[RMDB]
RNA sequence: GGGAACGACUCGAGUAGAGUCGAAAAUCUUUGGCUUUCGAGCCAAAGAGUGGGUGCAAUGUCCUUAAAGCACCAAACACGGAAAAACCGUGAAAGGACAAAAAAAUCACAGUUUCGACUGUGAUAAGACUUAAGUAUUCUUCGGAAUACUUAAGUCAAAAGAAACAACAACAACAAC
Reactivity to DMS in 0.01 (KOAc 150mM, MgCl2 10mM, bicine 150mM(pH8.5), 24C), signal-to-noise 3, nucleotides 027 to 126: u000c010u000u000u000g000g010c010u010u010u020c180g030a030g010c000c000a000a010a000g000a010g000u010g000g000g020u000g000c000a180a090u000g020u000c000c000u000u000a050a060a190g000c010a000c000c000a040a150a200c000a020c000g000g010a140a150a080a240a180c010c000g010u000g000a050a040a060g000g020a020c010a000a000a030a070a040a130a030u000c000a000c000a000g010u000u000u010c200g010a020c020u000g000u000g000a010u000a030a100
Reactivity to 2A3 in 0.01 (KOAc 150mM, MgCl2 10mM, bicine 150mM(pH8.5), 24C), signal-to-noise 5, nucleotides 027 to 126: u020c000u000u000u000g000g000c000u060u050u140c260g100a000g010c000c000a000a010a000g000a010g050u100g090g020g010u030g000c040a190a300u130g010u010c000c000u010u030a070a040a000g000c000a000c000c010a000a020a000c000a000c000g000g040a210a140a060a160a140c000c000g000u000g000a050a010a010g000g000a010c000a030a090a010a010a000a000a010u000c000a000c000a000g000u000u060u140c160g090a010c010u000g000u000g000a000u020a010a030